[RMDB]
Conditions: 150 mM KOAc, 10 mM MgCl2 and 150 mM bicine (pH 8.5), 24 C. Structure probing data (DMS and 2A3) for a 177-nucleotide construct.
RNA sequence: GGGAACGACUCGAGUAGAGUCGAAAAGAUAUGGAGUGCGGAAGCCUUGGAUUUAUUGAUCGGAAACGAUCAAUUGUCAGGAACUACUUCAGCGCACUCCUAAGUCAAACAGGCGUUCGCGCCUGAACUAAAGACUCUACUUCGGUAGAGUCUUUAGAAAAGAAACAACAACAACAAC
Reactivity to DMS in 0.01 (KOAc 150mM, MgCl2 10mM, bicine 150mM(pH8.5), 24C), signal-to-noise 4, nucleotides 027 to 126: g000a040u010a300u000g000g000a010g030u000g020c000g010g000a020a010g030c080c010u000u000g000g000a020u010u010u000a000u000u000g000a020u000c000g010g000a110a060a220c000g010a020u000c000a000a010u000u000g000u000c000a060g010g000a080a060c080u010a290c020u010u000c010a130g000c010g000c000a010c000u000c000c010u010a000a090g010u010c030a120a100a210c020a010g020g010c000g010u000u010c240g000c030g000c010c000u000g000a030a190
Reactivity to 2A3 in 0.01 (KOAc 150mM, MgCl2 10mM, bicine 150mM(pH8.5), 24C), signal-to-noise 2, nucleotides 027 to 126: g010a010u050a030u170g000g010a020g020u010g030c030g070g030a010a000g030c030c060u140u160g120g000a030u260u300u190a030u140u000g000a010u000c020g000g050a080a050a040c020g000a000u010c000a000a000u020u010g000u020c010a000g010g020a100a030c070u180a040c000u300u050c060a190g250c020g010c020a000c010u000c010c010u000a010a000g020u010c020a080a060a120c000a000g020g000c010g040u100u140c280g000c020g050c160c030u000g010a020a000
For DMS the reverse transcriptase was MarathonRT. 2A3 adducts were read by reverse transcription with SuperScript II with manganese. The data come from the RNA Mapping Database (RMDB), library TTRDEL.